[RMDB]
RNA sequence: GGGAACGACUCGAGUAGAGUCGAAAAGUUGCUGGUCCUGCACCCUCUCAGUAGGCAGAGUUAGGGAUGGGUAGACACACAGGCAUCCACAUUUUCAUUUUUAUUAGUCUCUAUAUUAGGAACCGUGAGUUUCUACUGAUACUCCCAUUCCAAGCCACCUACCACUGGAGUUCGCUCCAGUGGUAGGAAAAGAAACAACAACAACAAC
Reactivity to 2A3 in 0.01 (KOAc 150mM, MgCl2 10mM, bicine 150mM(pH8.5), 24C), signal-to-noise 1, nucleotides 027 to 156: g040u040u040g030c020u060g030g000u050c020c010u030g000c060a130c020c020c000u140c000u040c030a020g030u020a040g060g000c060a060g020a000g010u070u160a140g080g000g000a020u060g000g010g060u060a050g070a030c020a000c000a030c050a040g080g000c000a020u140c010c120a070c110a210u050u080u140u100c060a010u020u210u020u110u140a180u100u050a130g090u000c030u000c010u040a140u100a140u090u140a080g000g000a020a000c030c070g060u050g090a150g060u090u060u000c000u000a140c040u020g000a050u020a050c030u040c000c000c050a010u000u000c010c000a000a020g000c020c000a030

Source: RMDB library OK3TST, as collected in RNAgym. Structure probing data (2A3) for a 207-nucleotide construct. The RNA was probed in 150 mM KOAc, 10 mM MgCl2 and 150 mM bicine (pH 8.5) at 24 C. Values cover nucleotides 27 to 156. For 2A3, 414 sequencing reads were counted.